Structure probing data (2A3 and DMS) for a 177-nucleotide construct. Conditions: 150 mM KOAc, 10 mM MgCl2 and 150 mM bicine (pH 8.5), 24 C. The DMS profile rests on 3,277 reads.
[RMDB]
RNA sequence: GGGAACGACUCGAGUAGAGUCGAAAAGGCAAUCGUGUUAAUAAAGAAAUCUGAGGUUUUCGUUCGCAUACCUCGAACGUUCUGCUAAUACACAGUAAGUUGUCGUCGAGAUGCUUGCUCAGUCGAAGUGGUAGUACUACUUCGGUAGUACUACCACAAAAGAAACAACAACAACAAC
Reactivity to 2A3 in 0.01 (KOAc 150mM, MgCl2 10mM, bicine 150mM(pH8.5), 24C), signal-to-noise 3, nucleotides 027 to 126: g000g000c000a000a040u100c110g010u010g010u110u110a090a070u100a090a240a030g010a000a030a020u030c070u170g010a020g000g040u060u040u040u190c060g050u120u170c110g000c090a020u040a050c000c000u000c000g000a040a020c110g040u010u000c020u030g050c030u060a020a030u070a080c040a010c020a040g100u160a160a020g010u050u050g030u010c030g040u010c020g000a000g020a060u120g060c040u080u000g010c000u020c020a030g000u020c010g050a160a030
Reactivity to DMS in 0.01 (KOAc 150mM, MgCl2 10mM, bicine 150mM(pH8.5), 24C), signal-to-noise 4, nucleotides 027 to 126: g000g000c010a040a040u000c140g010u000g000u000u010a080a110u010a110a130a050g000a010a030a080u000c050u020g010a020g010g000u000u010u020u000c070g010u000u020c170g010c150a070u000a020c020c000u010c000g000a030a080c260g040u000u000c000u000g000c230u010a080a070u010a030c020a020c050a140g000u010a080a130g010u000u000g030u000c000g000u010c110g020a290g000a030u000g040c060u000u010g020c010u000c040a040g000u000c020g000a090a100